An RNA of 177 nucleotides, treated with 2A3 and DMS and read out base by base. For 2A3 the reverse transcriptase was SuperScript II with manganese. It was measured as part of the RMDB library OK1LIB. The 2A3 profile rests on 514 reads. Conditions: 150 mM KOAc, 10 mM MgCl2 and 150 mM bicine (pH 8.5), 24 C. The DMS profile rests on 3,642 reads.
RNA sequence: GGGAACGACUCGAGUAGAGUCGAAAAGAAUUUUAGAAAAGCAAGGCCAUCGAAGCAGCACCCGAAAUGCUGAGGGCUAAUUUGGGGUUUAGGAGCAACCUUUCCUGGAAAAAGUGGAAAGGAAAGAAUAAUUUAUCGUCUUCGGACGAUAAAUUAUAAAAGAAACAACAACAACAAC
Reactivity to 2A3 in 0.01 (KOAc 150mM, MgCl2 10mM, bicine 150mM(pH8.5), 24C), signal-to-noise 1, nucleotides 027 to 126: g110a020a120u100u120u090u120a120g040a020a220a000a000g110c160a120a000g010g040c000c000a040u090c130g060a020a000g000c030a000g000c000a080c000c000c000g110a240a040a000u270g140c030u020g000a070g000g140g000c000u000a000a110u010u180u170g000g050g000g000u010u030u150a120g060g020a020g080c000a020a060c000c000u000u000u000c000c000u000g160g030a070a230a050a000a000g180u050g000g050a000a010a000g040g000a090a000a000g040a000
Reactivity to DMS in 0.01 (KOAc 150mM, MgCl2 10mM, bicine 150mM(pH8.5), 24C), signal-to-noise 3, nucleotides 027 to 126: g000a100a110u010u060u000u040a170g010a010a030a080a100g010c100a100a110g010g000c020c010a050u040c050g000a180a040g030c030a060g000c060a130c050c040c040g010a060a080a080u020g000c040u000g000a200g000g000g020c010u010a010a070u010u000u010g010g000g020g030u000u000u000a050g000g010a100g000c090a130a100c030c010u000u000u000c000c000u000g010g010a090a080a040a100a180g050u030g000g000a000a010a010g000g000a010a040a080g010a090